[RMDB]
RNA sequence: GGGAACGACUCGAGUAGAGUCGAAAACACCCUGGUGAACAAUGUGGAGACCCUCGCCUACGUGCCUGCAGUCUUCACCAAGGGAGCGUCGUGGUUCACGCAGAUCGGUCCCGAGCACUCGCCCGGGGCCCUAGCAACUAUUCGUAGUUGCUAGGGCAAAAGAAACAACAACAACAAC
Reactivity to 2A3 in 0.01 (KOAc 150mM, MgCl2 10mM, bicine 150mM(pH8.5), 24C), signal-to-noise 4, nucleotides 027 to 126: c080a060c000c000c010u020g030g020u030g020a130a070c060a180a180u200g020u020g020g020a020g010a020c030c000c010u010c030g060c020c060u230a200c110g090u280g040c000c020u010g000c030a020g000u010c000u000u010c010a010c030c010a080a100g010g000g000a020g100c010g000u030c030g060u040g060g110u100u190c080a050c090g020c030a030g020a180u210c060g020g080u000c010c010c000g000a010g000c030a060c100u130c050g010c000c000c020g020g000g030
Reactivity to DMS in 0.01 (KOAc 150mM, MgCl2 10mM, bicine 150mM(pH8.5), 24C), signal-to-noise 5, nucleotides 027 to 126: c130a270c020c000c000u000g010g020u000g020a040a030c090a140a120u020g020u000g000g010a050g010a030c020c170c010u000c130g000c020c010u010a110c270g010u010g000c040c020u000g010c140a050g000u000c040u000u000c020a020c000c220a100a100g000g000g000a050g020c030g000u000c020g020u000g010g010u010u010c080a040c040g030c160a090g010a050u000c070g010g010u000c000c000c010g000a070g000c070a120c210u010c140g010c010c020c030g000g000g020